[RMDB]
RNA sequence: GGGAACGACUCGAGUAGAGUCGAAAAGAUCGUCUCUUCGGAGACGAUCAAAUAAAUCACAGGAAACGGGCAAAAGAGAAAAUCUCACCUGUGAAAAGGCCGAAACCCUCUGCUUCGGCAGAGGGAACAUACCGAAUGUGUUCGCACAUUCGGUAUGAAAAGAAACAACAACAACAAC
Reactivity to DMS in 0.01 (KOAc 150mM, MgCl2 10mM, bicine 150mM(pH8.5), 24C), signal-to-noise 2, nucleotides 027 to 126: g010a000u000c010g000u010c000u000c000u010u010c230g010g000a010g010a010c000g000a000u000c000a010a130a080u000a070a140a210u000c000a010c000a000g010g000a060a070a140c270g010g010g010c250a050a060a080a070g000a100g000a080a040a120a080u010c010u000c030a260c020c000u000g000u010g000a020a080a090a040g000g020c010c020g000a070a060a120c010c000c000u000c000u000g000c000u010u000c240g040g000c000a000g000a010g010g010g000a000a040
Reactivity to 2A3 in 0.01 (KOAc 150mM, MgCl2 10mM, bicine 150mM(pH8.5), 24C), signal-to-noise 2, nucleotides 027 to 126: g000a000u010c020g000u000c020u000c020u050u080c180g080g000a000g000a000c000g000a000u000c000a010a010a000u010a010a010a010u030c000a010c000a000g010g080a240a260a060c170g030g160g000c170a210a200a240a030g130a070g060a140a240a060a110u040c030u010c010a040c010c000u020g000u030g000a030a040a000a010g090g020c020c020g040a090a050a060c020c000c000u000c000u020g000c010u040u030c190g120g000c000a000g000a000g010g000g010a020a000
Source: RMDB library M2PK50, as collected in RNAgym. Chemical mapping of a 177-nucleotide RNA with DMS and 2A3. Reactivities are given for positions 27 through 126. The RNA was probed in 150 mM KOAc, 10 mM MgCl2 and 150 mM bicine (pH 8.5) at 24 C. For 2A3, 2,065 sequencing reads were counted. For DMS, 1,767 sequencing reads were counted.